[RMDB]
RNA sequence: GGGAACGACUCGAGUAGAGUCGAAAACAGAAUUUCCCCGUGACGCUCUCUUGUCAUCAUCACCUUCUUCUUGUCUGAACUCAUCAACAUUUCAGCCAAAUUACUGUGCUGCUAAGUCACUGGGAAGGCCUAUCAAGUGCUUCGGCACUUGAUAGGCAAAAGAAACAACAACAACAAC
Reactivity to 2A3 in 0.01 (KOAc 150mM, MgCl2 10mM, bicine 150mM(pH8.5), 24C), signal-to-noise 2, nucleotides 027 to 126: c070a020g190a110a060u050u030u020c000c000c000c000g010u010g000a000c000g050c000u050c000u010c050u110u130g090u130c070a040u020c020a030u020c040a050c030c000u000u030c000u070u020c010u030u070g090u000c000u000g010a050a030c010u040c080a120u070c060a080a120c000a020u010u030u040c000a020g020c000c000a020a060a010u100u060a120c070u040g110u170g020c000u010g030c000u040a080a040g020u030c000a000c020u010g000g000g000a010a010g020
This 177-nucleotide RNA was probed chemically with 2A3. 2A3 is a SHAPE reagent: it acylates the 2'-hydroxyl of flexible nucleotides of all four kinds. 2A3 adducts were read by reverse transcription with SuperScript II with manganese. The data come from the RNA Mapping Database (RMDB), library RFM100.